[RMDB]
Chemical mapping of a 177-nucleotide RNA with 2A3 and DMS.
RNA sequence: GGGAACGACUCGAGUAGAGUCGAAAAGUACGCGGCGGAGGUGAGGGUUCCGCUGCCCAGCGUGAUGCUGGCCGUCAGGCCGGUGCCCGGCGUCGUCGCGGUGAAGGUGCGGGUCCAGACGCCGUAGCCCCUACAGCUACUUCGGUAGCUGUAGGGGAAAAGAAACAACAACAACAAC
Reactivity to 2A3 in 0.01 (KOAc 150mM, MgCl2 10mM, bicine 150mM(pH8.5), 24C), signal-to-noise 3, nucleotides 027 to 126: g070u110a060c070g000c000g000g000c010g020g000a070g070g040u160g100a210g000g040g020u070u020c000c000g000c010u020g010c000c000c010a050g020c050g060u160g060a070u290g010c000u010g030g000c010c020g090u120c070a060g000g040c040c030g000g070u080g000c000c020c020g030g000c000g040u020c000g010u020c000g000c020g030g030u130g030a070a060g060g000u150g000c010g000g020g020u040c060c010a040g020a090c010g000c010c010g000u030a060g030
Reactivity to DMS in 0.01 (KOAc 150mM, MgCl2 10mM, bicine 150mM(pH8.5), 24C), signal-to-noise 1, nucleotides 027 to 126: g020u020a050c110g010c000g010g010c030g000g000a040g000g000u000g020a230g020g000g000u100u000c000c050g010c000u010g030c040c000c000a050g040c030g060u000g000a160u020g000c050u000g000g000c140c130g000u000c100a110g030g000c090c010g080g000u000g040c020c100c000g000g000c000g020u010c000g020u000c000g020c020g030g040u000g000a050a280g030g000u000g000c060g000g000g020u040c000c050a080g020a050c020g000c050c000g000u030a080g020
Values are in units of 0.01, from 0 to 300, in steps of 10. Source: RMDB library OK1LIB, as collected in RNAgym. The DMS profile rests on 2,031 reads.